[RMDB]
RNA sequence: GGGAACGACUCGAGUAGAGUCGAAAACUUGGUGAAUUGACCGUCGCCGUGGCUGUGAUCGGAAUCGAGCACGGUCAUCAGGUUGGCGCGCUCGGCGGCGGCGCGGAACGGCCUGCUGAAGAUGAUACGAUGCUCAUCCAUUCGUGGAUGAGCAUCGAAAAGAAACAACAACAACAAC
Reactivity to DMS in 0.01 (KOAc 150mM, MgCl2 10mM, bicine 150mM(pH8.5), 24C), signal-to-noise 1, nucleotides 027 to 126: c080u000u010g020g010u010g000a050a050u000u000g000a140c040c000g030u000c060g010c010c010g000u000g000g010c020u020g030u000g020a020u020c020g020g000a130a100u010c040g030a030g010c010a020c010g000g000u000c000a010u000c050a050g000g000u000u010g100g000c040g020c040g040c020u000c070g040g000c070g020g020c030g000g000c030g000c040g010g000a080a060c040g020g010c010c020u020g010c150u000g020a050a140g000a100u000g000a110u010a130
Reactivity to 2A3 in 0.01 (KOAc 150mM, MgCl2 10mM, bicine 150mM(pH8.5), 24C), signal-to-noise 1, nucleotides 027 to 126: c020u050u080g030g030u080g120a060a090u070u080g070a090c050c000g040u020c010g000c010c000g070u050g030g040c000u000g030u050g040a030u000c010g000g090a150a190u280c030g010a040g020c020a010c000g010g010u010c000a020u050c010a010g080g000u040u050g050g060c050g000c040g020c030u040c000g000g080c090g040g000c000g000g000c030g000c000g040g000a050a010c030g000g020c000c010u040g010c020u050g070a100a080g040a100u160g030a010u040a170